[RMDB]
RNA sequence: GGGAACGACUCGAGUAGAGUCGAAAAACACCACCGAGCUCUACGGAGCUCGGUGGUGAGGGAAUGAUGAUUUCACAGACUAGAGUCUCCGAUGCUGGUCAUGAUGUCAAAACUAAGUUCUGAUCAAUUAAGCAAAGAUUUUCGAAUCUUUGCUUAAAAAAGAAACAACAACAACAAC
Reactivity to DMS in 0.01 (KOAc 150mM, MgCl2 10mM, bicine 150mM(pH8.5), 24C), signal-to-noise 4, nucleotides 027 to 126: a080c010a020c010c010a030c020c000g050a030g030c000u020c010u010a130c200g050g000a010g040c000u010c020g000g030u000g010g010u000g000a010g000g010g010a050a030u010g010a190u010g000a080u000u000u010c010a050c090a130g010a030c010u010a030g010a120g000u000c030u010c160c140g010a030u020g000c020u000g010g000u000c020a230u010g020a030u000g000u000c030a030a050a080a130c190u000a120a170g020u000u000c000u000g000a100u020c090a050a160
Reactivity to 2A3 in 0.01 (KOAc 150mM, MgCl2 10mM, bicine 150mM(pH8.5), 24C), signal-to-noise 3, nucleotides 027 to 126: a000c010a000c000c010a000c000c010g020a000g000c030u000c010u040a080c280g130g000a020g000c000u000c010g000g000u000g000g000u020g010a040g010g020g030a030a050u040g090a010u040g010a070u090u040u000c040a030c030a060g010a040c040u030a030g020a010g110u020c080u040c100c060g030a010u070g020c000u010g010g030u020c030a030u020g040a030u010g010u010c000a000a020a040a090c030u120a070a060g020u010u000c000u010g040a050u090c050a060a090